[RMDB]
RNA sequence: GGGAACGACUCGAGUAGAGUCGAAAACGUACGUGGAGACACGUACGACGAGACUUCGGUCUCGAAUCGCAUGAACGGGGGCCAUGCGCGCGCGAGGCGUCGGUGGUCGGCGAGCCCACGGACGCAAAAACUCGCGCGUAAAUAAAUAGCUUCCGAAAUAUUUAUCACGAUUCGUCGUGAUAAAUAUAAAAGAAACAACAACAACAAC
Reactivity to DMS in 0.01 (KOAc 150mM, MgCl2 10mM, bicine 150mM(pH8.5), 24C), signal-to-noise 2, nucleotides 027 to 156: c020g040u000a000c000g030u000g010g000a300g010a300c020a020c000g000u010a000c000g010a120c030g000a230g000a020c000u000u000c210g060g020u010c020u000c000g020a030a040u000c040g030c020a050u010g000a100a150c060g000g010g060g080g000c150c010a060u010g000c010g010c000g010c020g040c000g020a030g020g000c030g000u000c010g000g050u000g010g000u000c020g020g030c160g060a300g020c180c000c010a040c030g020g020a010c010g020c140a050a050a080a060a220c000u000c020g020c000g020c020g010u000a000a050a080u030a100a120a160u000a080g010c010u000u000c000c000g010a160a180
Reactivity to 2A3 in 0.01 (KOAc 150mM, MgCl2 10mM, bicine 150mM(pH8.5), 24C), signal-to-noise 2, nucleotides 027 to 156: c010g000u000a000c000g000u000g020g010a030g000a050c000a000c000g000u000a000c000g010a020c000g000a000g000a000c000u080u140c270g090g000u030c030u000c000g020a040a080u070c030g010c000a000u010g020a300a130c020g000g000g000g000g000c000c000a000u010g000c020g000c000g000c000g000c000g010a020g020g000c000g020u010c070g140g010u000g000g000u010c020g020g060c100g030a010g010c000c000c000a010c030g060g000a010c000g000c000a050a090a050a090a110c010u000c000g000c000g000c000g000u000a000a000a010u080a000a020a030u120a010g000c000u010u000c000c000g000a000a060